[RMDB]
RNA sequence: GGGAACGACUCGAGUAGAGUCGAAAAGAGCUUAUUGCGAGGCACUACUAUAAUAGUAUGUGCAGUUUAUGAUCGCAUGCUUACUUAAGGGAUCAUAAACUCUAAUCUAGUCUUAGAGGGCCCCUUAGAUAGUAUUCUGAUUCGUUAGGGUGCUAUCAAAAGAAACAACAACAACAAC
Reactivity to 2A3 in 0.01 (KOAc 150mM, MgCl2 10mM, bicine 150mM(pH8.5), 24C), signal-to-noise 9, nucleotides 027 to 126: g060a000g010c050u130u110a060u200u200g030c040g020a050g050g000c010a000c000u050a010c000u020a020u100a300a240u130a100g040u030a030u280g010u020g000c010a000g000u020u060u050a140u100g060a050u010c010g020c120a040u090g030c020u090u050a070c010u060u070a050a070g050g010g010a010u050c010a040u120a080a070a040c010u000c010u020a010a040u040c040u060a020g170u030c030u040u030a020g010a020g020g010g020c010c000c000c000u000u010a020
Reactivity to DMS in 0.01 (KOAc 150mM, MgCl2 10mM, bicine 150mM(pH8.5), 24C), signal-to-noise 9, nucleotides 027 to 126: g010a090g010c030u010u030a050u010u010g010c040g000a050g000g010c000a010c000u000a020c010u000a110u040a100a120u030a010g020u010a010u050g030u000g010c030a070g010u030u020u030a060u030g010a100u010c000g010c050a060u020g010c050u010u010a110c120u010u020a040a050g000g000g000a030u010c040a090u010a050a070a180c000u000c020u010a040a020u020c070u020a090g010u020c180u000u000a030g010a040g010g010g010c060c000c010c010u010u010a060